[RMDB]
RNA sequence: GGGAACGACUCGAGUAGAGUCGAAAAGCAACGAGCGUAAUCGCGUCUUGACUAGGGAGACUGUAGGUGACGUGAGUAUCUAUCCCAGUGUGCAUAGCGCACAAUACGCUGAACUACAGUCAAUUAACCUUAUAAGUAUGUUCGCAUACUUAUAAGGAAAAGAAACAACAACAACAAC
Reactivity to 2A3 in 0.01 (KOAc 150mM, MgCl2 10mM, bicine 150mM(pH8.5), 24C), signal-to-noise 9, nucleotides 027 to 126: g060c040a020a060c050g070a010g010c010g030u080a090a130u070c010g000c010g030u010c020u080u150g080a120c070u130a100g070g110g050a150g010a020c000u010g010u010a010g010g090u040g010a000c010g010u010g010a030g040u090a080u080c080u060a080u030c010c010c010a020g020u010g000u010g000c050a130u160a280g080c040g000c040a000c000a010a010u050a010c010g000c020u030g010a030a000c000u010a010c010a010g030u010c000a010a030u140u080a050a060
Reactivity to DMS in 0.01 (KOAc 150mM, MgCl2 10mM, bicine 150mM(pH8.5), 24C), signal-to-noise 9, nucleotides 027 to 126: g010c110a070a070c060g000a050g010c010g010u000a050a100u000c020g020c010g010u000c010u000u000g010a160c190u010a120g010g010g010a170g000a020c010u000g000u000a010g000g000u000g010a030c030g020u000g010a070g010u000a050u010c180u000a100u000c010c010c000a170g010u000g000u000g000c010a170u010a120g020c210g000c000a010c010a040a090u000a030c010g010c010u000g010a090a090c010u000a010c010a010g000u000c010a100a100u010u010a070a140
Structure probing data (2A3 and DMS) for a 177-nucleotide construct. The DMS profile rests on 52,687 reads. The RNA was probed in 150 mM KOAc, 10 mM MgCl2 and 150 mM bicine (pH 8.5) at 24 C. DMS adducts were read by reverse transcription with MarathonRT. For 2A3, 118,918 sequencing reads were counted.